Structure probing data (DMS and 2A3) for a 177-nucleotide construct. Source: RMDB library OK2TRN, as collected in RNAgym. Values cover nucleotides 27 to 126. For DMS the reverse transcriptase was MarathonRT.

RNA sequence: GGGAACGACUCGAGUAGAGUCGAAAAGUCGCUGGGUGCCAGCCGUGCGCAGGUGCUGUGGUUUGUCAUUUUGCCCGGUGCGCUGCCGGAAAUCCUCACCGGAUUACGUAUUGGUCUGGGGGUGGGCACAUGCGCCCUAAUUCGUUAGGGCGCAUGUAAAAGAAACAACAACAACAAC
Reactivity to DMS in 0.01 (KOAc 150mM, MgCl2 10mM, bicine 150mM(pH8.5), 24C), signal-to-noise 2, nucleotides 027 to 126: g010u000c050g030c080u020g010g000g000u000g000c060c030a070g020c040c040g010u000g010c090g010c020a050g020g030u000g030c020u000g000u000g020g000u000u000u030g020u020c110a120u000u000u000u000g010c020c010c010g000g000u000g010c060g030c040u000g010c000c040g010g000a050a050a080u010c020c010u000c160a140c090c100g000g000a060u000u000a090c110g020u010a080u010u000g010g010u000c080u010g020g010g000g010g010u010g010g000g010c160
Reactivity to 2A3 in 0.01 (KOAc 150mM, MgCl2 10mM, bicine 150mM(pH8.5), 24C), signal-to-noise 1, nucleotides 027 to 126: g100u070c040g030c060u130g010g020g110u130g070c070c030a010g070c050c010g050u040g070c060g000c040a010g160g000u070g030c060u020g010u110g040g100u090u200u130g190u230c080a140u110u130u170u150g010c020c000c030g050g000u020g000c140g030c050u010g030c000c000g000g060a050a090a000u000c000c000u070c060a090c020c000g020g010a000u000u100a050c070g030u080a080u100u300g020g050u020c070u030g010g010g000g050g040u110g000g000g000c030

The reactions ran in a buffer of 150 mM KOAc, 10 mM MgCl2 and 150 mM bicine (pH 8.5), at 24 C.